[RMDB]
The record gives the reactivity of an RNA of 177 nucleotides to 2A3 and DMS. The data come from the RNA Mapping Database (RMDB), library M2PK50.
RNA sequence: GGGAACGACUCGAGUAGAGUCGAAAAAAGUGAUUAUUCGUAAUCACUUCACGCCGGGCGCGGUGGCGCGUGCCUGUAGUCCCAGCUACUGGGGAGGCUAAACGACGUACCCGUUCGCGGGUACGAAUGAAACUGAAUUAUUCGUAAUUCAGUUUCAAAAAGAAACAACAACAACAAC
Reactivity to 2A3 in 0.01 (KOAc 150mM, MgCl2 10mM, bicine 150mM(pH8.5), 24C), signal-to-noise 4, nucleotides 027 to 126: a000a000g010u010g010a010u010u020a010u030u120c200g030u060a020a010u000c000a010c000u050u040c070a080c100g010c010c000g000g000g000c010g000c010g020g000u000g000g000c010g000c000g010u010g000c010c000u010g030u020a030g020u000c000c000c000a010g020c070u300a250c090u280g030g000g000g010a010g020g000c030u070a080a060a030c090g100a010c010g010u000a000c020c020c000g010u030u030c260g000c010g080g000g000u000a000c010g000a000a010
Reactivity to DMS in 0.01 (KOAc 150mM, MgCl2 10mM, bicine 150mM(pH8.5), 24C), signal-to-noise 6, nucleotides 027 to 126: a040a000g010u000g010a010u000u000a020u000u010c190g020u000a010a000u000c000a010c000u000u000c080a100c160g010c020c000g010g010g000c010g010c010g010g010u000g020g010c010g010c020g010u000g010c010c000u000g030u000a050g000u000c000c000c000a020g020c010u000a130c060u010g010g000g010g010a030g000g000c010u000a030a080a080c160g010a220c010g010u000a010c000c000c000g020u000u010c190g010c020g000g000g000u000a000c000g010a040a070

Conditions: 150 mM KOAc, 10 mM MgCl2 and 150 mM bicine (pH 8.5), 24 C. For DMS the reverse transcriptase was MarathonRT.